[RMDB]
This 207-nucleotide RNA was probed chemically with DMS and 2A3.
The 2A3 profile rests on 6,260 reads.
2A3 adducts were read by reverse transcription with SuperScript II with manganese.
It was measured as part of the RMDB library M2RFPK.
RNA sequence: GGGAACGACUCGAGUAGAGUCGAAAAGGGAAUGGUGGUUUACCCCGUUAUCGAAUGAUUACCGACCAAUAAUUGGCGAAACUCGUUUCGCGUUGGCUGCCUAAUUCAAGGAAUUAGCGUGCCUUCAAAGACAUCAAGAAGUUCGCUUCUUGAUGAAGAUGUUUAUUGUCUUCGGACAAUAAACAUCAAAAGAAACAACAACAACAAC
Reactivity to DMS in 0.01 (KOAc 150mM, MgCl2 10mM, bicine 150mM(pH8.5), 24C), signal-to-noise 3, nucleotides 027 to 156: g000g020g010a060a070u000g020g000u000g000g000u000u000u000a100c040c010c000c030g010u000u000a100u000c040g010a090a090u010g020a180u000u000a040c020c020g020a050c030c020a090a100u000a070a130u010u010g010g030c000g010a080a070a060c050u010c120g040u000u000u000c030g030c070g030u000u000g010g000c020u000g060c150c010u010a030a030u000u000c000a130a120g040g010a030a040u000u000a040g000c060g000u000g000c000c020u000u000c040a070a080a120g010a190c020a010u000c000a020a010g000a030a040g020u000u010c300g020c000u010u000c000u010u010g000a010u010g010a020a080
Reactivity to 2A3 in 0.01 (KOAc 150mM, MgCl2 10mM, bicine 150mM(pH8.5), 24C), signal-to-noise 7, nucleotides 027 to 156: g040g020g030a090a100u140g010g020u030g030g040u070u090u240a170c030c010c000c020g050u100u100a120u160c080g060a140a090u160g030a070u050u110a040c020c040g070a060c030c030a030a040u180a090a070u110u120g050g000c020g020a030a020a030c060u040c090g070u010u020u010c010g000c010g010u010u030g010g000c030u070g030c020c010u010a010a010u010u010c130a210a080g160g020a070a020u010u010a010g030c060g060u040g020c020c000u020u010c030a090a090a030g070a030c010a000u000c000a000a000g000a010a000g010u030u130c150g040c120u000u000c000u000u000g000a010u000g000a010a020